An RNA of 207 nucleotides, treated with 2A3 and read out base by base. The data come from the RNA Mapping Database (RMDB), library M2RFPK. Conditions: 150 mM KOAc, 10 mM MgCl2 and 150 mM bicine (pH 8.5), 24 C. Reactivities are given for positions 27 through 156.
RNA sequence: GGGAACGACUCGAGUAGAGUCGAAAAAGAUCGAUUACGAUCGAUCCAUGAUGCCCCUCACCCACCUCUGAAGAUCCCAGGUGGGCGAGGGAACGGAGCACGGGAUCACGAGCAGUACGCUGCUCGAAAAAGAACUAGACCUUCGGGUCUAGUUCAACCAUUAGAUCCGCUUCGGCGGAUCUAAUGGAAAAGAAACAACAACAACAAC
Reactivity to 2A3 in 0.01 (KOAc 150mM, MgCl2 10mM, bicine 150mM(pH8.5), 24C), signal-to-noise 2, nucleotides 027 to 156: a000g020a020u000c000g010a020u060u090a110c180g050a000u030c000g000a030u000c000c000a090u230g070a080u210g140c010c020c000c010u000c030a010c000c000c000a000c000c020u070c080u090g100a170a010g000a010u000c000c000c010a000g000g000u000g000g000g030c030g000a000g000g000g000a000a050c110g020g100a140g080c110a090c150g000g010g000a000u000c020a010c030g000a000g010c000a000g040u060a030c230g050c110u000g000c000u000c000g010a010a000a000a010a010g000a000a000c000u000a000g000a000c020c020u090u100c300g110g000g000u000c000u000a000g010u000u000c000a000a000